[RMDB]
RNA sequence: GGGAACGACUCGAGUAGAGUCGAAAAUGUGUUCAGUUUGAGGGAGGAUGAUAAAAUGGAACGGAGAUUGCAAGGAGACGUAGAAAAUAAAGUAGGAGCAAAUGGAUUUUCUGCUUGGCGGUAUAGCGUAUCUAGUCUGGUUCGCCAGACUAGAUACAAAAGAAACAACAACAACAAC
Reactivity to DMS in 0.01 (KOAc 150mM, MgCl2 10mM, bicine 150mM(pH8.5), 24C), signal-to-noise 1, nucleotides 027 to 126: u030g000u000g000u000u000c050a030g030u000u000u000g030a100g000g010g020a070g000g000a060u000g010a040u000a060a030a080a060u010g000g010a040a110c100g020g040a060g010a080u000u000g000c100a070a110g000g000a010g020a020c180g010u000a030g000a040a060a120a030u020a040a010a040g020u000a060g010g000a000g000c100a020a090a050u000g030g010a100u000u000u000u000c030u010g000c080u000u000g020g080c080g010g010u010a040u000a090g030c110
Reactivity to 2A3 in 0.01 (KOAc 150mM, MgCl2 10mM, bicine 150mM(pH8.5), 24C), signal-to-noise 1, nucleotides 027 to 126: u130g070u000g000u030u050c050a040g010u000u110u150g080a050g020g020g010a000g030g000a020u050g020a030u120a080a100a020a050u090g040g000a000a020c040g020g000a050g020a050u000u100g000c040a040a030g050g000a040g010a000c020g000u020a020g070a030a070a020a010u150a030a070a000g070u030a040g020g070a010g030c030a000a130a060u060g000g040a020u010u050u040u000c010u020g060c040u050u000g030g070c010g050g000u120a060u060a150g090c050
Chemical mapping of a 177-nucleotide RNA with DMS and 2A3. The data come from the RNA Mapping Database (RMDB), library RFMREP. The reactions ran in a buffer of 150 mM KOAc, 10 mM MgCl2 and 150 mM bicine (pH 8.5), at 24 C. DMS adducts were read by reverse transcription with MarathonRT.